[RMDB]
The data come from the RNA Mapping Database (RMDB), library 15KLIB. Chemical mapping of a 170-nucleotide RNA with DMS and 2A3. For 2A3 the reverse transcriptase was SuperScript II with manganese. The 2A3 profile rests on 12,725 reads. High 2A3 reactivity points to a flexible backbone, as in loops and unpaired stretches.

RNA sequence: GGGAACGACUCGAGUAGAGUCGAAAAGCCCACUAAAGAGUAGAGGAAUUCUCGGAAAGCUCUCCCAAGAAGAACCAGAAUCCCUCAAGAGAGAGGAGAAUCCCCAUGACGCUGGAAGAGACUUCCGUUACUUGUUCCUUCGGGAACAAGAAAAGAAACAACAACAACAAC
Reactivity to DMS in 0.01 (KOAc 150mM, MgCl2 10mM, bicine 150mM(pH8.5), 24C), signal-to-noise 7, nucleotides 027 to 129: g020c000c000c000a170c200u040a050a150a120g040a070g030u050a070g020a040g030g020a050a040u030u020c000u000c030g040g010a210a060a020g000c080u000c000u020c040c010c040a140a100g020a030a060g000a080a030c080c070a060g020a100a080u020c050c020c030u050c020a120a100g000a090g040a000g010a000g010g000a110g020a070a060u000c040c020c010c050a150u060g000a000c160g050c040u030g000g000a250a130g030a000g000a080c080u020u040c030c030g040u040u000a070
Reactivity to 2A3 in 0.01 (KOAc 150mM, MgCl2 10mM, bicine 150mM(pH8.5), 24C), signal-to-noise 6, nucleotides 027 to 129: g010c000c010c000a010c030u230a130a170a040g190a060g080u160a040g030a030g030g020a020a030u070u020c020u030c040g000g000a020a020a010g000c010u010c020u050c030c000c010a050a040g090a040a010g020a050a060c040c030a030g040a050a030u060c030c000c000u020c030a040a030g080a010g010a010g000a020g040g020a080g010a040a060u090c010c010c010c010a070u130g040a040c080g000c020u020g010g020a020a010g020a040g020a020c020u030u000c030c010g010u040u000a030